Structure probing data (2A3 and DMS) for a 177-nucleotide construct. Conditions: 150 mM KOAc, 10 mM MgCl2 and 150 mM bicine (pH 8.5), 24 C. It was measured as part of the RMDB library OK1LIB. Reactivities are given for positions 27 through 126.
RNA sequence: GGGAACGACUCGAGUAGAGUCGAAAAAGUAGCAACUAUCACCCACCUUUUGCCAAGUACAGAAGCUUCAUCAUAUGAAAUGGACAAGAGGUUGGUUGUCUCAUUACUUCUUUGCCUUCUGGACUGGACCAUAUGAUGAGUUCGCUCAUCAUAUGGUAAAAGAAACAACAACAACAAC
Reactivity to 2A3 in 0.01 (KOAc 150mM, MgCl2 10mM, bicine 150mM(pH8.5), 24C), signal-to-noise 9, nucleotides 027 to 126: a000g140u130a020g030c060a030a040c020u080a050u220c040a100c020c010c000a030c010c020u020u070u020u030g020c010c000a130a040g040u050a060c020a050g050a060a020g050c010u080u070c030a220u030c020a030u100a060u270g070a060a050a030u080g010g040a080c010a020a020g030a050g070g000u030u040g030g020u020u050g030u010c040u020c090a070u060u120a100c050u070u080c020u100u100u100g040c020c000u050u040c030u060g020g020a060c020u040g020g020
Reactivity to DMS in 0.01 (KOAc 150mM, MgCl2 10mM, bicine 150mM(pH8.5), 24C), signal-to-noise 6, nucleotides 027 to 126: a060g040u010a060g030c100a070a050c070u010a050u010c090a130c030c010c030a070c120c050u000u010u010u010g020c000c020a050a090g010u010a070c050a020g000a040a050g000c110u010u010c080a050u010c170a090u030a260u010g020a030a030a040u020g010g000a050c040a000a010g000a050g020g010u000u000g010g000u000u010g000u010c020u030c040a040u000u020a070c100u000u000c040u010u010u010g000c170c010u000u000c030u000g010g020a070c030u000g000g010